[RMDB]
RNA sequence: GGGAACGACUCGAGUAGAGUCGAAAAGAGACAUCAUUGACCAACAAGCAAUAUAACCGUGCAGGAAGCGAAGUUCCAUGGAUUAUAACUGUUUCCUCUCUCAAUGGAACCAGCUAUAAUACCCAAGCCUACUGACCUAUUUCGAUAGGUCAGUAGGAAAAGAAACAACAACAACAAC
Reactivity to 2A3 in 0.01 (KOAc 150mM, MgCl2 10mM, bicine 150mM(pH8.5), 24C), signal-to-noise 7, nucleotides 027 to 126: g100a010g020a030c050a050u120c040a060u100u110g100a110c010c010a020a120c020a040a050g090c040a070a030u100a020u040a270a060c040c030g030u070g020c040a020g020g060a060a010g020c050g100a110a010g020u050u000c020c020a030u100g000g010a000u000u020a020u040a020a050c020u020g010u020u020u010c010c000u050c000u010c030u030c070a080a190u120g000g010a010a000c010c000a000g000c000u010a010u020a060a020u120a200c020c010c010a040a040g060
Reactivity to DMS in 0.01 (KOAc 150mM, MgCl2 10mM, bicine 150mM(pH8.5), 24C), signal-to-noise 3, nucleotides 027 to 126: g000a020g050a100c060a030u040c090a090u000u000g030a180c050c060a050a110c080a150a130g000c060a050a110u010a080u040a100a090c120c020g030u000g010c030a020g010g010a050a050g000c090g000a100a060g000u000u010c000c020a100u030g010g010a060u000u000a000u000a000a040c010u000g020u000u000u000c020c000u000c120u030c240u000c210a130a110u010g000g000a020a030c030c030a060g010c040u000a010u000a020a000u010a070c020c000c120a110a090g010